[RMDB]
Structure probing data (DMS and 2A3) for a 207-nucleotide construct. Source: RMDB library M2RFPK, as collected in RNAgym. The RNA was probed in 150 mM KOAc, 10 mM MgCl2 and 150 mM bicine (pH 8.5) at 24 C. 2A3 adducts were read by reverse transcription with SuperScript II with manganese.
RNA sequence: GGGAACGACUCGAGUAGAGUCGAAAACAAUGCAGGUUAAGCCAAAGGGAUGUCCCGACCGGAGGCCGACAAUCCAGGGAACCGGAUGUCAUCACGUUGUUGCCGUACCAGAUGGCAUCUUAAAUCCAAAAGAACACAUAGUUCGCUAUGUGUUCAAGAUUGCUUAAAAGUUCGCUUUUAAGCAAUCAAAAGAAACAACAACAACAAC
Reactivity to DMS in 0.01 (KOAc 150mM, MgCl2 10mM, bicine 150mM(pH8.5), 24C), signal-to-noise 2, nucleotides 027 to 156: c070a080a110u010g040c070a060g010g040u000u000a090a060g010c030c000a030a300a220g000g040g020a040u010g000u000c000c010c020g000a300c000c020g000g010a300g000g000c010c020g030a110c110a060a120u000c040c070a050g000g020g010a120a090c040c050g060g000a020u000g020u000c000a050u020c020a180c210g000u010u000g030u000u010g030c000c020g020u000a040c060c030a180g000a010u000g000g000c030a040u000c000u000u010a050a050a130u000c060c010a060a040a140a200g000a000a000c000a000c000a010u000a020g010u000u020c300g020c020u020a000u000g020u000g050u000u000c010a020a130
Reactivity to 2A3 in 0.01 (KOAc 150mM, MgCl2 10mM, bicine 150mM(pH8.5), 24C), signal-to-noise 2, nucleotides 027 to 156: c040a030a140u190g040c070a070g030g090u110u130a050a010g030c010c030a020a000a020g030g020g000a030u060g010u030c010c010c010g010a010c000c000g000g020a010g010g000c000c010g010a020c030a100a050u100c130c110a040g060g020g000a010a040c040c000g000g000a000u000g000u000c000a000u010c000a000c110g030u040u020g020u060u010g070c090c050g070u060a080c040c000a020g000a010u000g000g000c000a010u010c000u000u020a040a040a030u080c040c020a070a130a010a030g000a000a000c000a000c000a000u000a010g010u050u030c080g070c090u030a010u000g000u000g000u000u000c000a000a000